[RMDB]
An RNA of 170 nucleotides, treated with 2A3 and DMS and read out base by base.
As a SHAPE reagent, 2A3 marks flexible, mostly unpaired nucleotides at the ribose 2'-OH.
Conditions: 150 mM KOAc, 10 mM MgCl2 and 150 mM bicine (pH 8.5), 24 C.
Values cover nucleotides 27 to 129.
The DMS profile rests on 18,187 reads.
The data come from the RNA Mapping Database (RMDB), library 15KLIB.
RNA sequence: GGGAACGACUCGAGUAGAGUCGAAAAUCUUUUCUGUAAAGAGGAGACUGUAGGAUCCGCCGCCCAAGCCCGAACUGAGCCAAGUCCGAGCGAAGGGUCCGCGUGGGGAGGAAACGCAACCCGAGAGAACGUGGAGUGUUCGCACUCCACAAAAGAAACAACAACAACAAC
Reactivity to 2A3 in 0.01 (KOAc 150mM, MgCl2 10mM, bicine 150mM(pH8.5), 24C), signal-to-noise 6, nucleotides 027 to 129: u030c000u030u120u040u020c040u070g130u160a060a100a010g040a010g050g010a020g020a010c020u060g110u230a030g010g010a020u040c030c040g020c020c010g040c000c020c010a010a010g030c000c000c020g010a030a010c020u060g010a010g010c000c020a050a000g010u000c000c000g010a010g000c020g030a040a060g020g010g020u030c020c020g050c050g040u100g000g000g000g000a020g000g000a040a040a000c020g000c030a030a030c010c010c010g040a030g000a010g000a090a030c070
Reactivity to DMS in 0.01 (KOAc 150mM, MgCl2 10mM, bicine 150mM(pH8.5), 24C), signal-to-noise 6, nucleotides 027 to 129: u020c020u010u000u010u000c000u040g040u050a040a100a070g020a080g000g000a020g010a030c060u030g010u040a070g050g020a050u040c050c060g030c050c050g020c000c030c020a070a180g000c080c010c030g020a040a060c080u030g010a050g020c090c030a060a060g050u020c030c040g020a080g000c010g000a050a050g000g000g000u030c000c060g000c100g030u030g030g030g020g040a010g000g000a050a040a040c020g030c070a040a070c070c020c020g030a100g030a070g020a070a060c160